Annotation
This 177-nucleotide RNA was probed chemically with DMS and 2A3. It was measured as part of the RMDB library OK1LIB. In probing experiments dimethyl sulfate is read out at A N1 and C N3, which are open when not base-paired. For 2A3 the reverse transcriptase was SuperScript II with manganese. Conditions: 150 mM KOAc, 10 mM MgCl2 and 150 mM bicine (pH 8.5), 24 C. Values are in units of 0.01, from 0 to 300, in steps of 10.
RNA sequence: GGGAACGACUCGAGUAGAGUCGAAAAGGAACUAUGUUCAAAGACGAAGCCUCCACGUCAUAGUUUCGACGUCUGUAGACAGAUGAGCAUAGUUAAGAUCUGGAGGAGGCACGGAUCAAAAUAAAAACGUGGAUGUUGUGUUCGCACAACAUCUACGAAAAGAAACAACAACAACAAC
Reactivity to DMS in 0.01 (KOAc 150mM, MgCl2 10mM, bicine 150mM(pH8.5), 24C), signal-to-noise 6, nucleotides 027 to 126: g010g010a020a010c000u010a000u010g010u000u000c040a040a120a080g010a020c000g010a100a180g030c000c000u010c000c000a300c000g000u000c020a120u040a050g010u010u010u010c090g020a160c150g010u000c050u030g000u030a080g000a050c030a080g000a110u000g010a030g000c020a010u000a010g020u010u000a040a060g000a000u000c000u000g000g000a150g010g020a000g010g010c000a100c000g000g010a010u000c010a100a050a070a090u060a060a040a050a080a120
Reactivity to 2A3 in 0.01 (KOAc 150mM, MgCl2 10mM, bicine 150mM(pH8.5), 24C), signal-to-noise 8, nucleotides 027 to 126: g100g010a000a000c000u000a000u000g010u010u010c030a070a060a030g010a010c010g020a040a000g000c000c000u000c000c000a010c000g000u000c020a030u090a040g110u020u060u120c070g040a040c050g040u010c030u040g100u030a070g030a100c020a010g040a040u020g000a010g000c010a010u000a000g010u010u030a070a020g000a000u000c000u010g010g010a080g010g000a000g010g010c010a000c010g000g000a000u010c020a030a030a020a030u170a020a040a010a000a000